[RMDB]
RNA sequence: GGGAACGACUCGAGUAGAGUCGAAAAGACCCCACUCAACUGGGGUCCGCGUUCCAUCCUUUCUUACCUGAUGGCCGGCAUGGUCCCAGCCUCCUCGCUGGCGCCGGCUGGGCAACAUUCCGAAGGGGGUUAGAUUAUAGUUCGCUAUAAUCUAACCAAAAGAAACAACAACAACAAC
Reactivity to DMS in 0.01 (KOAc 150mM, MgCl2 10mM, bicine 150mM(pH8.5), 24C), signal-to-noise 4, nucleotides 027 to 126: g000a040c000c000c010c000a020c090u010c300a100a110c220u000g010g010g010g020u000c010c020g010c100g000u000u000c000c010a110u000c030c030u000u010u000c030u000u010a130c170c100u000g000a130u000g010g000c030c000g020g000c030a070u000g030g010u010c300c000c000a030g000c000c090u000c160c070u010c150g000c030u000g010g010c210g020c010c000g020g010c000u000g000g000g000c020a040a070c030a060u010u010c170c180g000a060a050g000g000g010
Reactivity to 2A3 in 0.01 (KOAc 150mM, MgCl2 10mM, bicine 150mM(pH8.5), 24C), signal-to-noise 2, nucleotides 027 to 126: g000a000c000c040c050c000a010c030u210c050a080a300c090u050g010g000g010g020u000c000c020g060c060g040u040u000c000c020a070u030c050c000u060u020u050c020u070u060a100c040c000u060g050a080u090g200g190c020c000g020g030c030a150u220g030g030u090c000c010c040a010g000c000c020u090c010c010u140c070g020c030u040g010g000c010g030c020c000g010g030c000u000g000g000g040c000a030a030c000a080u130u000c040c010g010a010a010g020g000g010